[RMDB]
RNA sequence: GGGAACGACUCGAGUAGAGUCGAAAAGAUAUGGACAUUAUGAGUGGAGCUUGGACCUCGGAAACGAGCUAGCUCGCAUACUGUGUCCUAAGUCAAAUCAAUACCCGUCUUCGGACGGGUAUUGAAACUUUAUUGCGAUGUUCGCAUCGCAAUAAAGAAAAGAAACAACAACAACAAC
Reactivity to DMS in 0.01 (KOAc 150mM, MgCl2 10mM, bicine 150mM(pH8.5), 24C), signal-to-noise 3, nucleotides 027 to 126: g010a050u000a300u010g000g000a010c020a010u000u000a050u000g000a200g030u000g020g000a010g020c000u000u010g040g010a110c300c040u000c000g030g010a080a080a160c000g010a000g000c030u000a020g010c010u000c010g000c010a030u000a080c270u000g020u000g000u000c000c000u000a020a150g000u000c040a060a070a100u000c010a010a000u000a020c000c000c000g000u000c000u000u010c210g030g010a000c000g010g000g020u000a010u000u000g000a000a050a150
Reactivity to 2A3 in 0.01 (KOAc 150mM, MgCl2 10mM, bicine 150mM(pH8.5), 24C), signal-to-noise 2, nucleotides 027 to 126: g030a030u070a020u160g000g010a010c010a010u070u130a090u300g040a080g110u170g190g020a000g000c020u060u080g040g150a260c050c000u000c000g020g030a050a050a010c010g020a000g020c010u010a010g000c010u040c030g020c000a050u160a160c030u020g020u010g010u070c000c000u000a100a010g070u040c030a050a050a190u020c000a000a000u010a000c000c000c000g000u000c020u010u070c260g030g010a000c000g000g000g000u000a010u010u000g000a000a000a000